[RMDB]
RNA sequence: GGGAACGACUCGAGUAGAGUCGAAAACAAUCAACAAUAUGGUUUGUGUAGUUAUGCUGAAAAUCGUUGAGGUUGUAUGGAAUAGGUUAACCGUAAGACCUUAAGUGGAAAAACUUUAAAAUUAAUCAAAAUCAUGUACACUUCGGUGUACAUGAAACUUGAGACGUUAGUUCGCUAACGUCUCAAGAAAAGAAACAACAACAACAAC
Reactivity to 2A3 in 0.01 (KOAc 150mM, MgCl2 10mM, bicine 150mM(pH8.5), 24C), signal-to-noise 3, nucleotides 027 to 156: c010a000a110u150c020a010a080c030a040a090u090a040u150g040g020u070u040u030g060u040g030u060a060g020u050u090a060u100g030c040u090g090a020a040a080a080u080c030g000u000u030g020a000g020g020u020u010g010u020a100u060g030g020a090a080u050a090g020g030u040u040a070a010c010c010g000u020a050a030g030a040c010c000u020u040a060a020g030u060g000g030a070a070a040a030a110c070u160u180u170a060a110a130a090u150u200a050a050u080c030a010a090a040a130u010c000a000u000g000u000a000c000a000c030u040u030c180g090g000u010g000u000a000c000a000u000g000a000a000a010
Reactivity to DMS in 0.01 (KOAc 150mM, MgCl2 10mM, bicine 150mM(pH8.5), 24C), signal-to-noise 1, nucleotides 027 to 156: c040a070a110u000c090a110a090c040a120a160u010a130u020g010g010u000u000u010g060u000g020u000a070g010u000u000a110u030g000c040u040g000a090a050a100a080u000c060g040u000u010g000a070g030g050u000u000g040u010a040u010g000g020a040a060u000a080g050g010u000u000a020a200c010c100g000u000a170a170g010a030c010c000u000u000a020a090g030u000g000g010a090a050a050a050a100c040u000u000u000a030a050a050a110u000u000a070a140u000c010a070a070a070a150u000c000a040u000g000u000a030c000a000c000u000u000c280g020g050u000g040u010a000c000a000u000g000a000a000a070